[RMDB]
RNA sequence: GGGAACGACUCGAGUAGAGUCGAAAAGACGUGGAGGUUUCGCGCCCUCCUUUGCGCGUAAGUACGUCGAAAUUCGGUGCUUAGGAUCGCACCGUUGGAUCCAUUUGAUAUCCGCUUUGUGCCGCGGUUGGGCAUUUACACUUACCCGAAAGGGGAAAGCGGCAUUAUAUUUCGAUAUAAUGCCGCUAAAAGAAACAACAACAACAAC
Reactivity to 2A3 in 0.01 (KOAc 150mM, MgCl2 10mM, bicine 150mM(pH8.5), 24C), signal-to-noise 2, nucleotides 027 to 156: g010a000c010g000u040g000g120a080g050g010u020u110u200c030g000c000g050c050c010c030u110c050c050u060u080u040g020c020g000c020g030u050a070a040g060u020a010c050g000u010c020g050a100a020a020u040u070c000g000g000u000g000c000u130u150a090g130g090a090u110c020g000c000a000c000c010g000u010u030g010g000a050u040c060c010a140u060u080u220g120a100u050a030u090c020c010g020c000u100u050u120g020u030g030c000c010g050c020g030g040u130u030g080g000g000c010a010u050u030u100a050c050a010c030u080u110a020c000c000c000g050a080a000a030g000g000g000g000a010a050
Reactivity to DMS in 0.01 (KOAc 150mM, MgCl2 10mM, bicine 150mM(pH8.5), 24C), signal-to-noise 2, nucleotides 027 to 156: g020a010c050g030u010g030g020a120g050g010u000u000u000c080g030c040g010c150c040c030u000c070c010u000u010u000g010c030g030c060g010u000a060a080g020u020a040c040g000u020c020g000a110a060a150u000u020c010g050g040u000g010c020u000u000a120g040g030a160u010c170g000c030a080c000c030g030u000u010g000g020a090u010c000c080a280u000u000u000g010a130u000a090u000c000c020g010c040u000u000u000g010u000g020c000c030g050c050g050g030u010u020g020g030g060c000a100u010u000u010a130c060a090c120u010u010a210c000c000c010g010a060a100a180g000g010g010g010a050a060
Annotation:
Structure probing data (2A3 and DMS) for a 207-nucleotide construct. The 2A3 profile rests on 1,057 reads. 2A3 adducts were read by reverse transcription with SuperScript II with manganese. As a SHAPE reagent, 2A3 marks flexible, mostly unpaired nucleotides at the ribose 2'-OH.